[RMDB]
RNA sequence: GGGAACGACUCGAGUAGAGUCGAAAAGACGUAAUCCGCGCAAAUCCACAAACGCCACCGAUGAGCGUUUCGCUGUAGCCGCUUAAGGCAACAGCCGGGGCCGCCUGAGCCCUGUUACCAAAGACGGGAAACUCGAUGCCAUUCGUGGCAUCGAGAAGGAAUAACAGACAUUCGUGUCUGUUAUUCCAAAAGAAACAACAACAACAAC
Reactivity to 2A3 in 0.01 (KOAc 150mM, MgCl2 10mM, bicine 150mM(pH8.5), 24C), signal-to-noise 5, nucleotides 027 to 156: g030a000c020g020u050a090a100u090c080c030g000c010g000c050a060a100a070u030c060c030a070c080a070a050a020c050g000c020c010a120c070c120g150a180u100g030a060g010c010g020u020u070u070c030g000c010u010g010u040a050g000c000c020g090c150u210u240a140a070g010g000c020a020a000c000a010g000c000c000g010g000g000g000c000c030g040c000c020u030g000a020g000c000c000c000u010g040u060u100a030c030c030a030a010a000g100a040c010g000g010g030a020a050a040c000u010c000g000a010u000g010c010c010a040u070u070c180g080u090g000g010c000a000u000c000g000a000g000a000a000
Reactivity to DMS in 0.01 (KOAc 150mM, MgCl2 10mM, bicine 150mM(pH8.5), 24C), signal-to-noise 1, nucleotides 027 to 156: g000a040c020g000u000a140a130u000c000c030g000c090g010c050a040a100a130u020c030c050a070c000a070a270a050c040g030c010c010a300c070c010g010a140u000g000a170g030c050g000u000u000u000c150g050c050u010g040u000a060g010c000c010g040c260u000u000a100a220g000g000c010a010a080c010a080g060c060c040g030g030g030g050c020c020g010c110c020u030g000a170g000c030c000c000u000g000u000u000a110c000c080a010a120a140g000a100c030g000g000g000a150a100a060c020u000c000g010a010u000g000c010c050a100u000u000c170g050u020g090g010c000a000u010c000g000a010g010a020a100